[RMDB]
RNA sequence: GGGAACGACUCGAGUAGAGUCGAAAAAUAAAUAGGGAGAACGGGUUUGGUUAGAGGUCGUUCCCUGCGGCUGUAUAUUAGACUCUCUUUCCGAAUUUUAUCGUCUAAUAUAUAGCCGCAGGAAAAAUGUGAGAACAAGAUUCGUCUUGUUCUCACAAAAAGAAACAACAACAACAAC
Reactivity to DMS in 0.01 (KOAc 150mM, MgCl2 10mM, bicine 150mM(pH8.5), 24C), signal-to-noise 1, nucleotides 027 to 126: a110u000a020a040a130u000a150g010g000g000a100g000a090a070c050g030g010g000u000u000u000g030g020u020u020a110g000a110g020g010u000c010g000u000u000c060c000c000u000g020c020g000g010c020u000g000u010a010u000a000u000u000a000g000a010c010u010c160u020c180u000u010u010c140c040g060a090a100u010u010u010u000a050u020c130g010u000c010u000a010a000u010a020u000a010u000a000g000c000c000g000c000a000g000g000a050a000a030a050a080